[RMDB]
RNA sequence: GGGAACGACUCGAGUAGAGUCGAAAAAGUGCGGCCUGUUGCUCAGGCACAUGUUGCAGGUGGUGGUGUUUUUUUACUACUUCUACAACGCCGUCUGCAAUACCACGCUCUAUCGCGAGCGGCGUGUGCCCUGCAUCAUCUGUGUGGGCUCUCCCACUCCUCCGAUUGUAUUCGUACAAUCGGAGGAAAAAGAAACAACAACAACAAC
Reactivity to 2A3 in 0.01 (KOAc 150mM, MgCl2 10mM, bicine 150mM(pH8.5), 24C), signal-to-noise 1, nucleotides 027 to 156: a000g090u050g060c090g030g060c000c000u010g040u020u000g020c020u020c240a020g000g030c070a000c000a000u020g010u040u040g000c020a050g000g010u020g000g030u020g000g010u000g060u060u060u020u000u000u010u000a140c160u030a060c000u300u130c030u000a000c000a040a000c000g000c000c000g020u020c000u010g050c000a040a000u030a050c000c000a030c000g030c000u010c070u160a300u080c200g040c030g060a010g000c020g000g000c020g000u030g020u050g000c010c000c000u000g000c010a010u010c000a010u130c120u100g110u040g010u140g120g000g000c000u020c060u070c000c000c000a020c040

Conditions: 150 mM KOAc, 10 mM MgCl2 and 150 mM bicine (pH 8.5), 24 C.
Structure probing data (2A3) for a 207-nucleotide construct.
Reactivities are given for positions 27 through 156.
For 2A3 the reverse transcriptase was SuperScript II with manganese.